The data come from the RNA Mapping Database (RMDB), library OK1LIB.
An RNA of 177 nucleotides, treated with 2A3 and DMS and read out base by base.
2A3 adducts were read by reverse transcription with SuperScript II with manganese.
RNA sequence: GGGAACGACUCGAGUAGAGUCGAAAAGGGAGAACCGAGCAGAGGCAUAGCGAACUGCGCACGGCGAAGCCUUGAGGGAAUGCCGUAGGACCCGGGUUCGAUUCCCGGCUGCUCCACCGAAGGGCCACACUGCACGAGGGUUCGCCCUCGUGCAGUGAAAAGAAACAACAACAACAAC
Reactivity to 2A3 in 0.01 (KOAc 150mM, MgCl2 10mM, bicine 150mM(pH8.5), 24C), signal-to-noise 1, nucleotides 027 to 126: g000g050g010a020g020a080a060c000c000g040a020g000c000a000g010a050g050g060c070a110u100a060g000c000g020a020a040c020u050g020c070g060c100a090c010g030g060c030g050a050a000g010c020c060u130u160g060a100g000g000g020a030a000u120g000c000c000g030u070a020g020g030a000c000c000c000g000g000g000u080u070c010g020a020u000u000c020c010c000g000g000c000u030g000c070u020c000c000a050c030c010g030a010a150g020g030g010c010c050a030
Reactivity to DMS in 0.01 (KOAc 150mM, MgCl2 10mM, bicine 150mM(pH8.5), 24C), signal-to-noise 1, nucleotides 027 to 126: g060g000g140a080g010a120a040c130c020g000a030g070c050a010g000a020g000g000c060a130u020a110g040c040g000a140a130c030u000g000c030g080c170a020c060g010g030c000g040a250a080g000c020c000u100u000g000a060g010g020g000a150a040u000g020c000c030g020u020a010g000g020a130c130c030c000g000g000g010u000u010c000g000a300u020u000c040c020c000g000g000c200u000g000c070u000c050c060a140c020c020g000a070a210g000g060g020c000c030a180